Record summary:
This 177-nucleotide RNA was probed chemically with 2A3 and DMS. Values cover nucleotides 27 to 126. Conditions: 150 mM KOAc, 10 mM MgCl2 and 150 mM bicine (pH 8.5), 24 C. It was measured as part of the RMDB library TTRDEL. For 2A3 the reverse transcriptase was SuperScript II with manganese.
RNA sequence: GGGAACGACUCGAGUAGAGUCGAAAAGAUAUGGAACCUGGUGGGAGCCUGGCAUGUCGGAAACGACAUGCAGGCAUCGAUCAUCAAGGGUUCCUAAGUCAAACGCCUCAUCUUCGGAUGAGGCGAACCAUAUGUUUCUGUUCGCAGAAACAUAUGGAAAAGAAACAACAACAACAAC
Reactivity to 2A3 in 0.01 (KOAc 150mM, MgCl2 10mM, bicine 150mM(pH8.5), 24C), signal-to-noise 4, nucleotides 027 to 126: g000a000u010a000u060g000g010a010a010c010c020u050g000g020u010g000g010g010a020g000c000c000u010g080g050c010a000u000g000u000c000g000g010a010a020a000c000g000a000c000a000u010g000c000a000g000g000c010a010u240c010g000a010u010c000a000u020c060a110a140g200g000g000u000u000c000c000u000a010a000g000u000c030a130a050a160c030g000c010c000u000c000a010u000c020u080u100c300g200g000a000u010g000a000g020g000c000g000a000a000
Reactivity to DMS in 0.01 (KOAc 150mM, MgCl2 10mM, bicine 150mM(pH8.5), 24C), signal-to-noise 4, nucleotides 027 to 126: g000a010u000a030u010g000g000a010a010c000c000u000g030g020u000g000g000g000a010g030c000c000u010g010g000c000a000u000g010u000c000g020g000a010a010a020c000g000a010c000a010u000g000c000a010g020g020c000a170u000c230g000a010u010c010a000u000c000a100a150g010g010g000u000u000c000c000u000a000a100g010u000c010a110a090a230c020g010c000c000u000c000a000u000c000u000u020c230g020g010a010u000g000a010g000g010c000g010a000a040